Chemical mapping of a 177-nucleotide RNA with DMS.
Conditions: 150 mM KOAc, 10 mM MgCl2 and 150 mM bicine (pH 8.5), 24 C.
Source: RMDB library TTRINS, as collected in RNAgym.
The DMS profile rests on 515 reads.

RNA sequence: GGGAACGACUCGAGUAGAGUCGAAAAGAUAUGGAGCCUUGAAUCAGCUACCCACCGUAGAACUACAGUGUAAGUGUUCGGAAACGAACACUAAGCUGCUACGAGGCUGAUUCAAGGCUCCUAAGUCGUAAUCUGUUCUCUUCGGAGAACAGAUUACAAAAGAAACAACAACAACAAC
Reactivity to DMS in 0.01 (KOAc 150mM, MgCl2 10mM, bicine 150mM(pH8.5), 24C), signal-to-noise 1, nucleotides 027 to 126: g030a150u000a300u020g030g000a070g000c000c000u000u020g000a030a000u000c000a050g000c000u000a020c050c110c130a300c280c000g000u000a000g000a090a110c000u020a300c020a000g030u000g080u000a260a180g000u000g020u000u000c000g020g000a070a050a300c020g070a000a000c000a050c000u020a030a300g020c000u000g000c000u000a030c000g000a030g020g020c000u000g050a000u000u000c030a000a020g000g000c000u000c000c000u000a000a050g000u050c050